[RMDB]
RNA sequence: GGGAACGACUCGAGUAGAGUCGAAAAGAAGGCUAUCCAGCAAGCGAAGGAUCGCGACGUUACGACCGUUUUCCUCCUGAACUCCGACGCGUCCACGGCGUGGUUUAAGAAGGCGCUGGACGCCGGGAGCCUGGUUAUUCACAUCACCAGCGACGGCCCUCGUUUUACUGUUCGCAGUAAAACGAGGAAAAGAAACAACAACAACAAC
Reactivity to 2A3 in 0.01 (KOAc 150mM, MgCl2 10mM, bicine 150mM(pH8.5), 24C), signal-to-noise 2, nucleotides 027 to 156: g080a040a020g070g000c030u010a030u050c020c030a010g060c140a140a030g060c060g090a130a050g020g010a030u020c030g010c030g060a020c020g040u070u070a040c060g010a020c000c000g010u000u020u060u030c020c020u040c010c070u080g020a090a020c030u000c030c050g060a070c030g000c010g010u000c000c020a060c090g040g000c000g000u030g000g110u040u090u060a060a080g040a040a020g100g000c000g000c010u010g000g010a000c020g000c000c000g010g000g010a010g010c000c010u010g000g030u010u030a020u070u150c070a060c010a130u010c020a000c010c000a010g000c000g060a030c020g020g010c010
Reactivity to DMS in 0.01 (KOAc 150mM, MgCl2 10mM, bicine 150mM(pH8.5), 24C), signal-to-noise 1, nucleotides 027 to 156: g010a140a080g040g000c040u010a100u000c000c020a080g010c000a120a150g030c080g010a110a210g020g000a030u000c000g040c000g060a080c090g010u000u000a070c000g010a080c040c030g000u000u000u000u000c000c030u000c060c030u010g010a050a060c030u000c050c040g000a100c020g060c050g010u000c050c140a070c060g000g040c000g080u000g010g000u000u000u010a100a160g000a110a140g020g010c050g060c020u020g020g000a030c060g010c030c020g000g000g000a100g010c060c000u010g000g030u000u000a260u000u000c190a130c090a110u000c040a100c010c010a060g040c080g000a080c050g010g010c060